[RMDB]
RNA sequence: GGGAACGACUCGAGUAGAGUCGAAAAGCUUAAAAACCUGCGCUGAGCCCUUCUCCCCCAGCUUGCCUGUGUCCUAGGGAAUUGGAAGGUCAUCCUUCACAGGAUCGUGUGGAAGUCCUGCUCGGGGUCCAAACAUGGUAAUUCGUUACCAUGUUAACAUCCGUGCUUAAUUCGUUAAGCACGGAUGAAAAGAAACAACAACAACAAC
Reactivity to 2A3 in 0.01 (KOAc 150mM, MgCl2 10mM, bicine 150mM(pH8.5), 24C), signal-to-noise 2, nucleotides 027 to 156: g000c030u100u160a040a020a000a070a180c000c030u160g000c120g000c140u110g040a020g050c000c030c000u060u060c080u070c020c000c000c020c000a000g010c010u060u050g030c010c020u060g040u020g020u040c000c020u010a000g040g020g070a100a080u090u060g080g020a050a030g000g000u110c010a070u140c030c010u030u050c040a030c000a040g000g020a070u060c050g020u070g010u000g100g030a050a030g030u020c010c000u030g000c040u010c050g010g000g020g000u000c010c020a020a080a000c000a000u000g000g000u000a000a030u070u040c090g000u020u000a010c000c000a010u000g010u000u000a000a050
Reactivity to DMS in 0.01 (KOAc 150mM, MgCl2 10mM, bicine 150mM(pH8.5), 24C), signal-to-noise 2, nucleotides 027 to 156: g030c040u010u000a060a100a090a090a090c040c020u000g020c060g010c030u000g010a100g000c030c000c010u000u000c030u020c030c020c010c020c050a130g040c060u000u010g050c060c020u000g010u010g000u000c060c030u010a150g020g030g010a090a110u000u000g030g010a090a080g010g020u000c090a120u000c010c020u000u010c060a060c030a090g030g020a060u000c060g040u010g020u020g000g010a100a050g010u000c040c010u000g010c050u000c070g020g000g000g000u000c030c040a100a030a020c000a000u000g010g030u000a000a080u000u010c300g020u000u000a020c000c000a020u000g000u000u000a060a170